[RMDB]
RNA sequence: GGGAACGACUCGAGUAGAGUCGAAAAAUGCGUACCAGUGAUCGAUCCUAUGUCGCGAUCCUAGCGUACGUACGUCGGUACUCAUGGUACCAUGCGCGCUAGCUAGGUAUCUAGGCGCACGACAUGCCCCACAGGCUCUAUUCGUAGAGCCUGUGGGAAAAGAAACAACAACAACAAC
Reactivity to DMS in 0.01 (KOAc 150mM, MgCl2 10mM, bicine 150mM(pH8.5), 24C), signal-to-noise 2, nucleotides 027 to 126: a120u000g010c040g000u010a070c010c010a020g040u000g010a000u000c040g000a070u020c150c190u010a070u030g030u000c050g020c050g030a030u000c040c020u000a060g010c150g030u010a010c040g040u000a000c140g000u000c100g040g010u000a040c010u000c240a130u020g000g010u000a030c020c010a110u000g010c010g000c080g020c030u020a080g010c060u010a170g000g020u010a050u010c000u000a070g000g000c000g020c020a100c120g030a020c060a050u010g010c140
Reactivity to 2A3 in 0.01 (KOAc 150mM, MgCl2 10mM, bicine 150mM(pH8.5), 24C), signal-to-noise 2, nucleotides 027 to 126: a020u050g000c040g010u020a020c010c000a000g060u090g280a010u000c000g030a070u080c020c010u250a170u300g140u180c030g040c030g010a000u040c000c030u020a040g030c000g090u030a010c000g010u000a030c010g130u090c090g000g010u010a070c020u030c130a160u210g060g000u000a010c020c000a020u030g010c000g030c000g000c050u010a010g010c010u060a120g070g190u210a150u090c000u000a010g010g030c000g010c000a030c000g050a020c010a040u190g070c000

The record gives the reactivity of an RNA of 177 nucleotides to DMS and 2A3. The 2A3 profile rests on 1,663 reads. For 2A3 the reverse transcriptase was SuperScript II with manganese.